[RMDB]
RNA sequence: GGGAACGACUCGAGUAGAGUCGAAAAGAAAGAAAGAAUCCUACUGUUGGUUAAUGCUACACCAACGAGGUAGACACAAUCCUUUGGAGUAGAACAUGAGCGAUAAAAUUAUUCACCUGAGUGACAAAACACUAAAACUGUUCGCAGUUUUAGUGUUAAAAGAAACAACAACAACAAC
Reactivity to DMS in 0.01 (KOAc 150mM, MgCl2 10mM, bicine 150mM(pH8.5), 24C), signal-to-noise 8, nucleotides 027 to 126: g010a120a080a100g010a060a090a090g010a160a100u020c040c010u000a060c080u030g010u000u000g010g020u000u000a090a090u030g020c120u030a040c150a040c010c010a030a040c100g010a030g020g010u000a040g000a110c180a090c120a100a080u000c010c020u000u000u000g000g010a060g020u000a040g010a050a060c070a050u000g000a060g000c070g020a090u020a050a070a050a060u020u020a070u010u000c020a060c020c030u010g000a100g010u000g000a090c170a060a080
Reactivity to 2A3 in 0.01 (KOAc 150mM, MgCl2 10mM, bicine 150mM(pH8.5), 24C), signal-to-noise 7, nucleotides 027 to 126: g090a010a030a010g090a020a070a010g050a030a060u060c010c010u030a110c050u120g030u030u000g030g010u070u140a110a030u210g110c080u070a040c020a010c040c000a000a020c020g020a040g020g010u030a010g090a010c050a010c020a110a070u090c010c000u040u040u080g050g010a040g000u070a030g060a070a020c020a080u110g020a020g050c040g010a010u130a060a110a060a020u210u150a060u080u080c030a050c050c050u070g060a040g050u050g030a040c030a040a150
The record gives the reactivity of an RNA of 177 nucleotides to DMS and 2A3. Reactivities are given for positions 27 through 126. DMS adducts were read by reverse transcription with MarathonRT. The RNA was probed in 150 mM KOAc, 10 mM MgCl2 and 150 mM bicine (pH 8.5) at 24 C.